[RMDB]
RNA sequence: GGGAACGACUCGAGUAGAGUCGAAAAGGAAGUGUAUUCUGUGAUUGUUCUGUACAUUGAUCGAUAUUCAGGUAACUGCAUCUGCUUAUCAGAUCUGUUCAGAGCCGACCCUCCGUCACACCUUUGUUGAAUGGAAUCGUUUCGACGAUUCCAUUCAAAAAGAAACAACAACAACAAC
Reactivity to 2A3 in 0.01 (KOAc 150mM, MgCl2 10mM, bicine 150mM(pH8.5), 24C), signal-to-noise 4, nucleotides 027 to 126: g060g020a060a080g050u070g020u170a170u140u130c100u070g070u060g050a100u040u090g010u040u030c000u000g010u010a010c010a050u050u260g010a010u020c010g000a000u000a010u020u030c000a000g040g020u050a140a180c150u140g030c090a030u000c000u000g000c010u010u010a000u010c030a090g000a000u000c000u000g000u000u030c000a000g000a010g020c000c000g050a070c000c000c000u010c000c000g020u000c000a000c000a010c000c010u020u040u050g230u030
Reactivity to DMS in 0.01 (KOAc 150mM, MgCl2 10mM, bicine 150mM(pH8.5), 24C), signal-to-noise 1, nucleotides 027 to 126: g020g000a100a020g020u000g000u010a040u000u010c110u050g020u000g000a080u000u060g030u000u000c000u000g030u010a000c070a060u010u040g050a000u000c030g020a010u000a020u010u000c030a030g100g020u000a070a130c300u040g030c150a040u010c000u000g010c010u000u000a000u000c000a120g000a010u000c000u000g060u000u000c040a030g000a080g000c000c170g000a070c040c000c000u000c010c030g000u030c020a080c060a120c140c000u010u010u020g000u030
Chemical mapping of a 177-nucleotide RNA with 2A3 and DMS. For DMS, 1,650 sequencing reads were counted. The reactions ran in a buffer of 150 mM KOAc, 10 mM MgCl2 and 150 mM bicine (pH 8.5), at 24 C. DMS (dimethyl sulfate) methylates the pairing face of unpaired adenines and cytosines. Values cover nucleotides 27 to 126.